The record gives the reactivity of an RNA of 177 nucleotides to 2A3 and DMS. For DMS the reverse transcriptase was MarathonRT. The data come from the RNA Mapping Database (RMDB), library OK1LIB. In probing experiments dimethyl sulfate is read out at A N1 and C N3, which are open when not base-paired. For 2A3 the reverse transcriptase was SuperScript II with manganese.
RNA sequence: GGGAACGACUCGAGUAGAGUCGAAAACAAACCAGAAUGUGCUCUUCUGCAAGGAGCUAUUCGCUCAGUUGGCACGUGAAGCUAUCCAAUUGCAGGCACCAAUUCCACAUGUGGUCAUCGGCAACCAAUGAUGCGUAAUCUUCGGAUUACGCAUCAUAAAAGAAACAACAACAACAAC
Reactivity to 2A3 in 0.01 (KOAc 150mM, MgCl2 10mM, bicine 150mM(pH8.5), 24C), signal-to-noise 7, nucleotides 027 to 126: c050a020a100a040c010c040a040g070a080a060u100g030u060g080c020u030c030u160u050c040u060g020c040a030a090g050g010a020g010c010u030a070u050u080c030g030c040u060c040a110g010u090u120g070g010c040a010c080g030u070g060a060a020g010c020u040a060u160c040c020a070a150u070u050g010c030a030g000g010c000a020c040c010a030a060u070u080c020c000a040c040a120u120g050u080g070g020u030c010a050u050c060g050g000c020a010a030c010c000a020
Reactivity to DMS in 0.01 (KOAc 150mM, MgCl2 10mM, bicine 150mM(pH8.5), 24C), signal-to-noise 3, nucleotides 027 to 126: c180a110a150a150c130c030a150g020a030a030u010g040u000g000c030u030c020u000u000c010u000g000c130a040a080g000g000a030g010c030u010a040u000u010c050g030c100u000c070a110g010u010u000g000g000c060a080c010g000u010g000a090a040g010c060u040a030u020c080c020a090a060u010u000g000c000a000g010g000c070a030c020c060a060a100u000u020c020c020a040c060a070u020g010u000g000g000u000c030a080u000c060g000g030c030a100a110c080c060a090